[RMDB]
RNA sequence: GGGAACGACUCGAGUAGAGUCGAAAAGUGUUCAGUCUUAAAGUACGAGUGACCGUUCACGUUUAGUCAUAAUGUACAAUGAAAGGCUUCCAGCUUACUAAGGCGUGUACGCGUGGCCGCUACUAUGCGAUAUAGAGAUGUUCGCAUCUCUAUAUCGAAAAGAAACAACAACAACAAC
Reactivity to DMS in 0.01 (KOAc 150mM, MgCl2 10mM, bicine 150mM(pH8.5), 24C), signal-to-noise 9, nucleotides 027 to 126: g020u000g010u000u010c080a090g010u010c040u000u000a070a110a090g010u000a030c030g000a260g020u000g000a030c020c020g010u010u000c080a030c070g010u000u000u000a060g010u000c060a050u000a060a120u010g010u000a060c130a090a090u010g010a080a150a070g000g000c020u000u010c130c140a100g010c030u000u000a300c070u010a050a050g000g010c010g010u000g010u000a030c040g010c150g020u000g000g000c020c020g000c150u000a040c050u000a080u010g020
Reactivity to 2A3 in 0.01 (KOAc 150mM, MgCl2 10mM, bicine 150mM(pH8.5), 24C), signal-to-noise 9, nucleotides 027 to 126: g090u070g050u080u100c060a060g060u010c050u080u170a180a170a030g010u010a010c020g040a040g120u030g100a020c010c020g030u030u050c070a040c050g030u040u070u120a030g010u020c030a040u060a220a080u230g070u100a060c060a090a110u130g110a130a050a030g000g000c000u160u040c070c070a020g000c010u040u050a040c020u030a050a060g080g010c020g010u030g000u030a020c040g030c050g040u030g070g000c000c010g020c020u020a030c010u040a080u190g100